Chemical mapping of a 207-nucleotide RNA with 2A3 and DMS. For 2A3, 1,482 sequencing reads were counted.
RNA sequence: GGGAACGACUCGAGUAGAGUCGAAAACACAGAAUUGAAGAGAGUCAGGAUUUUACUCCAGAUUAAACUUUGACUUAAGGGAACGUUAUGGCUGGUUUGAUAUUCUAUCAAUAUCAGCAGUAAGGCUGUUGGACUUUCUUAUCAUUCCCCAGAGUAAUGCAUUAAAUGCAUUCGUGCAUUUAAUGCAAAAAGAAACAACAACAACAAC
Reactivity to 2A3 in 0.01 (KOAc 150mM, MgCl2 10mM, bicine 150mM(pH8.5), 24C), signal-to-noise 4, nucleotides 027 to 156: c110a000c020a040g160a190a110u180u140g020a060a030g020a010g000a010g010u030c020a050g040g050a090u060u070u090u170a060c040u020c020c030a040g070a150u090u090a090a070a050c040u120u080u190g070a020c010u080u070a040a050g070g000g000a070a040c070g050u060u070a060u100g070g000c000u010g020g030u050u020u000g000a000u030a040u130u150c150u110a050u080c020a020a030u040a000u230c000a000g000c010a010g010u050a050a000g010g060c060u060g090u140u030g080g000a010c000u030u020u020c000u010u070a080u100c040a020u020u030c040c000c000c030a010g070a020g120u200a150a040
Reactivity to DMS in 0.01 (KOAc 150mM, MgCl2 10mM, bicine 150mM(pH8.5), 24C), signal-to-noise 2, nucleotides 027 to 156: c040a200c010a130g000a060a080u000u000g010a080a090g000a120g010a080g030u010c030a080g000g010a080u000u000u000u000a080c080u000c040c060a100g000a110u000u000a060a080a110c060u010u000u000g010a060c040u000u000a080a080g020g020g030a030a080c110g030u000u000a040u020g010g040c010u000g010g000u000u000u000g010a020u010a090u010u010c200u000a060u000c030a010a030u000a010u010c010a030g010c020a080g010u010a030a070g030g010c020u000g010u000u000g020g000a070c090u000u000u000c030u000u000a110u000c030a110u000u000c000c000c010c030a190g010a090g000u000a120a180